RNA sequence: GGGAACGACUCGAGUAGAGUCGAAAAGCAAUGGGGUCACCCAUCGAGUUGCUCUUCCUCUAAUCUAUCUUCAGGGGGUUAGAGCCUUGAAACCUUUGCAAGAUACUUCAAAUUGUUCAAAGCAAGGAUCGAACGAUUCAUUCGUGAAUCGUUCGAUAAAAGAAACAACAACAACAAC
Reactivity to 2A3 in 0.01 (KOAc 150mM, MgCl2 10mM, bicine 150mM(pH8.5), 24C), signal-to-noise 1, nucleotides 027 to 126: g030c010a000a020u040g020g020g020g020u120c040a090c060c050c000a000u010c010g040a050g070u100u220g030c010u010c000u040u030c020c000u000c010u010a070a090u050c030u050a090u090c050u160u060c090a040g100g000g010g010g000u050u020a020g000a000g040c000c010u010u010g030a000a000a000c000c000u000u060u010g010c000a040a010g020a020u170a070c050u030u110c070a040a130a300u090u090g090u110u050c070a070a020a000g000c000a000a030g060g000
Reactivity to DMS in 0.01 (KOAc 150mM, MgCl2 10mM, bicine 150mM(pH8.5), 24C), signal-to-noise 2, nucleotides 027 to 126: g010c100a020a030u020g020g000g020g000u020c200a170c000c000c000a210u000c050g010a090g020u000u000g040c060u020c000u000u000c010c000u000c020u010a060a040u020c180u000a100u020c090u010u000c170a130g000g000g040g000g010u010u010a030g000a040g020c010c040u010u000g010a100a120a170c050c000u000u000u000g010c020a190a220g000a040u010a060c050u000u010c160a020a060a270u000u030g000u010u000c060a060a100a090g010c040a060a010g000g010

Structure probing data (2A3 and DMS) for a 177-nucleotide construct. DMS adducts were read by reverse transcription with MarathonRT. The reactions ran in a buffer of 150 mM KOAc, 10 mM MgCl2 and 150 mM bicine (pH 8.5), at 24 C.